The record gives the reactivity of an RNA of 207 nucleotides to 2A3.
For 2A3, 586 sequencing reads were counted.
Conditions: 150 mM KOAc, 10 mM MgCl2 and 150 mM bicine (pH 8.5), 24 C.
[RMDB]
RNA sequence: GGGAACGACUCGAGUAGAGUCGAAAAAUCAAUAACAUUAAUUUCUUAUCUCUUAACAUUUACACUAUGUAAAAGUUAAGAUGGUUCUCACUUUGUGAAUAGUAUUUUGCCACUAACACAAUUGCCUGAUAUUUUUUCCUUUGCAAUGUAGUAUGCAACUCUAAGCUGAGUUCGCUCAGCUUAGAGUAAAAGAAACAACAACAACAAC
Reactivity to 2A3 in 0.01 (KOAc 150mM, MgCl2 10mM, bicine 150mM(pH8.5), 24C), signal-to-noise 2, nucleotides 027 to 156: a000u080c050a050a080u300a120a130c060a070u210u300a270a160u110u300u140c070u140u150a130u110c010u000c010u030u000a000a000c000a020u020u010u040a000c010a020c090u280a140u290g010u000a010a000a000a030g010u010u000a000a000g010a010u030g010g000u070u050c010u050c010a010c040u060u120u010g010u020g060a120a170u030a100g020u050a110u080u180u130u200g110c040c010a010c060u040a120a000c000a010c010a120a110u010u050g030c010c000u040g090a050u040a230u210u070u110u010u070u130c000c030u000u090u100g020c030a040a070u090g000u010a110g070u010a080u060g040c030a030